[RMDB]
RNA sequence: GGGAACGACUCGAGUAGAGUCGAAAAGAGCUUCACCUGCUCAAGGCGAUCGAAAAGGCUACGCGGCAAACGCUUACCGAGGCGCAAUUGCCCACCGUCGAGGAUGUCAACACCCAGCGGGUGGCCAAUGCCAUUAGGUCUUCGGACCUAAUGGCAUAAAAGAAACAACAACAACAAC
Reactivity to 2A3 in 0.01 (KOAc 150mM, MgCl2 10mM, bicine 150mM(pH8.5), 24C), signal-to-noise 1, nucleotides 027 to 126: g080a000g040c020u090u040c020a020c020c020u020g000c010u020c030a000a050g000g000c030g030a080u020c020g060a010a110a020a110g010g000c010u110a010c080g030c040g030g000c040a000a040a110c080g030c010u070u110a140c040c060g100a150g000g000c000g000c070a070a040u010u010g000c030c020c000a010c030c000g100u050c040g060a050g110g060a090u150g070u140c020a010a020c020a070c120c000c000a000g020c000g010g000g000u030g010g000c070c010a010
Reactivity to DMS in 0.01 (KOAc 150mM, MgCl2 10mM, bicine 150mM(pH8.5), 24C), signal-to-noise 2, nucleotides 027 to 126: g040a090g000c030u000u000c050a060c140c040u000g060c010u000c050a090a130g010g000c020g010a040u000c020g000a040a060a140a100g000g000c090u000a020c110g050c200g010g000c020a010a020a080c050g000c000u000u000a230c210c190g010a100g000g040c010g000c050a100a060u010u000g000c030c000c030a220c120c100g000u000c040g010a130g000g000a140u030g010u000c050a070a070c100a050c080c040c090a110g000c030g010g030g010u000g000g060c000c050a080
Source: RMDB library OK2TST, as collected in RNAgym.
The record gives the reactivity of an RNA of 177 nucleotides to 2A3 and DMS.
Reactivities are rounded to 0.1 and cut off at 0 and 3.
For 2A3, 955 sequencing reads were counted.